[RMDB]
RNA sequence: GGGAACGACUCGAGUAGAGUCGAAAAAGGAUCGAUCGUACACGGCGCAUGUACGUACUCUGACAUGGUACAGCGCCUAGGCCAUGUAGCAUCGUACGGUACAGCGCAUGGAUCGUACGAGGCCUGGAAUGCCUACAUUCUUCGGAAUGUAGGCAUUAAAAGAAACAACAACAACAAC
Reactivity to 2A3 in 0.01 (KOAc 150mM, MgCl2 10mM, bicine 150mM(pH8.5), 24C), signal-to-noise 3, nucleotides 027 to 126: a000g070g010a130u100c060g030a050u030c020g040u030a010c050a010c050g010g000c010g000c040a130u020g000u010a010c040g030u040a020c030u050c060u130g060a040c000a120u090g030g000u100a120c020a070g010c020g030c000c020u010a010g030g000c000c000a020u070g050u110a040g040c040a050u040c030g000u020a020c030g020g030u040a020c010a010g030c060g010c130a000u020g040g000a030u060c020g000u000a000c000g000a010g010g000c000c000u000g010g080
Reactivity to DMS in 0.01 (KOAc 150mM, MgCl2 10mM, bicine 150mM(pH8.5), 24C), signal-to-noise 6, nucleotides 027 to 126: a040g010g000a180u000c070g000a090u000c030g010u000a030c070a140c120g000g000c010g020c010a200u000g010u000a020c010g020u010a030c110u000c130u010g000a090c070a050u010g010g010u000a050c100a070g000c060g010c030c010u000a020g010g010c010c010a040u010g000u000a080g020c120a120u000c060g010u000a020c040g010g000u000a020c020a060g000c160g020c150a100u000g000g000a030u000c060g000u000a010c000g010a020g000g010c010c070u010g010g000